[RMDB]
RNA sequence: GGGAACGACUCGAGUAGAGUCGAAAAUUGCGCCUCGGAUUCGCCGUCGGCAUUUCCCCAGCAGCCAUGACCUACCAGGCUGCGGUGCGGCUCGCCGCACAGGUCAUCCCUCAUCGGGCGCGUCCUGGAUAGGGCUAUACUUUCGAGUAUAGCCCAAGGUAGGAAAAUGUUUCGACAUUUUCCUACCAAAAGAAACAACAACAACAAC
Reactivity to DMS in 0.01 (KOAc 150mM, MgCl2 10mM, bicine 150mM(pH8.5), 24C), signal-to-noise 1, nucleotides 027 to 156: u000u000g010c010g020c000c010u000c100g030g000a110u000u000c110g040c030c010g070u000c030g000g040c010a200u010u000u000c010c040c020c040a080g050c010a070g000c010c030a150u010g030a070c030c090u000a130c110c060a160g000g000c020u000g040c000g030g040u000g000c010g020g000c170u000c180g010c000c010g000c090a030c040a020g020g000u000c110a100u010c020c000c020u000c080a150u000c100g000g000g020c020g000c030g000u000c010c030u000g030g000a170u010a100g040g050g030c010u010a010u000a000c000u010u000u010c250g000a070g040u000a010u000a010g020c000c000c000a000a000
Reactivity to 2A3 in 0.01 (KOAc 150mM, MgCl2 10mM, bicine 150mM(pH8.5), 24C), signal-to-noise 3, nucleotides 027 to 156: u070u090g030c030g040c000c000u070c050g010g020a120u170u100c090g050c060c010g040u050c030g000g000c020a030u040u050u060c000c000c000c000a050g000c000a000g020c010c020a150u120g050a070c010c010u130a180c090c080a010g010g000c010u010g000c010g000g010u060g000c040g020g000c040u080c150g070c050c000g000c020a000c010a000g000g020u040c010a060u050c030c010c010u120c070a170u120c040g000g020g000c020g030c020g040u040c000c010u050g030g030a080u130a170g010g000g000c000u000a000u000a000c000u020u050u140c160g030a000g000u000a000u000a030g000c040c000c000a000a000